This 177-nucleotide RNA was probed chemically with DMS and 2A3. Source: RMDB libraries RFM100 and RFMREP, as collected in RNAgym. For DMS the reverse transcriptase was MarathonRT. The reactions ran in a buffer of 150 mM KOAc, 10 mM MgCl2 and 150 mM bicine (pH 8.5), at 24 C.
[RMDB]
RNA sequence: GGGAACGACUCGAGUAGAGUCGAAAAGAAAGAAAGCUCGAAUAAGUGGGAUUGAUUUUGCGGAUUGUGUUAUAUAGGAACACUGCUGUAUCGACUUCUCUGCUCCACUAAGGGUGAACCGUAAUAACACAGCAUCAAUAUUCGUAUUGAUGCUGUGAAAAGAAACAACAACAACAAC
Reactivity to DMS in 0.01 (KOAc 150mM, MgCl2 10mM, bicine 150mM(pH8.5), 24C), signal-to-noise 7, nucleotides 027 to 126: g010a100a110a090g010a090a110a200g000c040u000c010g010a130a070u040a070a070g010u010g000g000g000a080u000u010g010a080u010u010u010u010g010c030g000g000a060u010u010g020u010g000u020u000a050u020a110u020a110g010g010a070a060c070a040c040u020g000c020u000g010u020a080u010c070g010a050c040u000u010c040u000c030u000g010c070u020c010c030a030c060u030a080a100g010g000g010u010g010a050a110c040c030g020u010a040a050u020a070a210
Reactivity to 2A3 in 0.01 (KOAc 150mM, MgCl2 10mM, bicine 150mM(pH8.5), 24C), signal-to-noise 9, nucleotides 027 to 126: g120a010a080a010g070a020a050a000g010c030u030c050g050a110a080u190a240a020g020u050g030g030g000a030u020u080g030a030u030u100u080u120g070c030g030g040a070u090u100g040u010g030u070u020a090u020a040u070a150g180g040a050a010c030a010c050u050g010c010u020g020u070a070u100c030g040a030c020u060u020c030u000c010u050g070c020u020c020c000a010c030u050a070a080g030g000g000u050g030a030a010c020c010g020u030a060a060u090a160a010